[RMDB]
An RNA of 177 nucleotides, treated with DMS and 2A3 and read out base by base. Reactivities are given for positions 27 through 126.
RNA sequence: GGGAACGACUCGAGUAGAGUCGAAAAUAGAUGAUGUAUUAUACAUGUUUUGUGUGGUUUGCUAUAUUUCUACUUAUAGAUGGCUAAAAUCUGAGUUUGAGAGCAGCAUGCCACAGAUGCUUGGAUUCAUCUCUUAGCAAUUCGUUGCUAAGAGAUGAAAAGAAACAACAACAACAAC
Reactivity to DMS in 0.01 (KOAc 150mM, MgCl2 10mM, bicine 150mM(pH8.5), 24C), signal-to-noise 3, nucleotides 027 to 126: u010a120g020a100u000g010a030u020g010u000a120u020u040a170u020a110c020a020u000g010u010u000u000u010g000u020g070u020g000g020u010u010u000g000c000u010a070u000a110u000u000u010c010u010a000c010u000u010a080u080a020g000a010u000g000g010c230u040a060a060a110a010u010c000u000g000a020g000u000u020u000g000a030g020a010g010c240a030g000c000a010u000g000c000c020a020c010a060g000a030u020g000c030u000u000g010g010a240u000u010
Reactivity to 2A3 in 0.01 (KOAc 150mM, MgCl2 10mM, bicine 150mM(pH8.5), 24C), signal-to-noise 6, nucleotides 027 to 126: u150a020g130a080u140g050a040u070g060u070a120u210u140a080u080a050c030a030u050g080u010u150u080u040g180u010g000u000g020g030u000u010u000g000c000u010a020u010a070u300u030u010c010u000a010c000u070u040a110u060a230g010a010u030g100g060c150u170a140a090a000a010u000c010u010g000a000g020u060u300u100g030a020g010a010g000c030a000g000c010a010u020g020c000c000a010c000a000g020a010u050g020c040u030u050g060g120a100u020u010